[RMDB]
RNA sequence: GGGAACGACUCGAGUAGAGUCGAAAAUCCUCCCGCUUACACUUUGAUCUUAUUUGAUCGGAUCGUGACCCCAGCCCCGCCGGGCCGACCCGAAAUGAAAAGCUCUCCUCCUGCGAAGCCCCCUCGGCUUUAGAGGGUUUUUCGAAACCCUCUAAAGAAAAGAAACAACAACAACAAC
Reactivity to DMS in 0.01 (KOAc 150mM, MgCl2 10mM, bicine 150mM(pH8.5), 24C), signal-to-noise 4, nucleotides 027 to 126: u020c060c030u000c030c030c010g000c090u020u020a090c090a070c100u000u010u020g000a040u010c010u020u030a130u010u030u010g000a070u000c040g000g010a050u010c030g000u000g020a150c030c010c010c050a130g010c070c010c010c040g010c060c060g000g000g000c030c030g000a110c040c020c030g000a060a080a090u020g010a050a080a080a110g000c020u000c020u000c030c010u000c020c010u010g000c050g000a080a120g010c020c000c020c020c030u000c040g000g010
Reactivity to 2A3 in 0.01 (KOAc 150mM, MgCl2 10mM, bicine 150mM(pH8.5), 24C), signal-to-noise 9, nucleotides 027 to 126: u030c010c010u030c010c000c000g020c050u100u130a050c060a030c050u100u070u170g030a030u040c020u050u200a220u260u190u130g060a050u040c030g010g020a060u040c020g030u040g180a250c000c000c000c010a010g020c010c000c000c040g020c020c020g000g020g000c010c000g020a030c010c000c010g030a080a070a070u100g040a040a060a040a030g010c000u010c010u010c000c010u020c000c010u020g030c020g030a050a020g010c000c000c010c000c000u040c030g040g000
This 177-nucleotide RNA was probed chemically with DMS and 2A3. The RNA was probed in 150 mM KOAc, 10 mM MgCl2 and 150 mM bicine (pH 8.5) at 24 C. The data come from the RNA Mapping Database (RMDB), libraries RFM100 and RFMREP. Reactivities are given for positions 27 through 126. For 2A3, 9,037 sequencing reads were counted.